[RMDB]
Description
This 177-nucleotide RNA was probed chemically with 2A3 and DMS. Source: RMDB library OK1LIB, as collected in RNAgym. For 2A3 the reverse transcriptase was SuperScript II with manganese. For 2A3, 19,111 sequencing reads were counted. The reactions ran in a buffer of 150 mM KOAc, 10 mM MgCl2 and 150 mM bicine (pH 8.5), at 24 C.
RNA sequence: GGGAACGACUCGAGUAGAGUCGAAAAGAAUCUUCCGGGCGGUCGGAUGCCCACUGGCUUGGGCUAUGACUUUCUGCGCCCUGUCGAGGACUCGGGGAUCAACGACCUGAAGCACUAUUACUUCAUGAGCAGUAUUUAAUUUCGAUUAAAUACUGCUAAAAGAAACAACAACAACAAC
Reactivity to 2A3 in 0.01 (KOAc 150mM, MgCl2 10mM, bicine 150mM(pH8.5), 24C), signal-to-noise 9, nucleotides 027 to 126: g030a010a060u020c010u110u020c030c020g010g010g000c030g020g010u050c030g020g020a070u170g030c010c020c000a010c040u090g170g100c080u080u080g010g000g000c010u030a020u070g030a040c000u050u130u070c110u130g060c020g010c020c000c020u030g040u040c050g050a050g020g050a050c020u020c050g010g000g020g030a060u070c040a060a070c040g070a050c010c010u020g030a030a000g050c050a020c110u130a110u270u200a090c030u080u060c040a110u160g100
Reactivity to DMS in 0.01 (KOAc 150mM, MgCl2 10mM, bicine 150mM(pH8.5), 24C), signal-to-noise 7, nucleotides 027 to 126: g000a110a060u020c030u000u020c030c020g000g000g020c090g030g020u000c000g000g010a090u030g010c010c000c000a030c080u020g020g020c130u040u010g000g010g000c010u010a300u080g000a040c030u020u020u030c120u030g000c060g020c010c030c020u010g000u010c060g010a030g010g020a080c070u010c030g020g000g000g000a100u010c060a050a090c130g010a080c030c020u000g000a030a040g000c100a080c190u020a100u030u020a120c020u010u010c040a050u030g000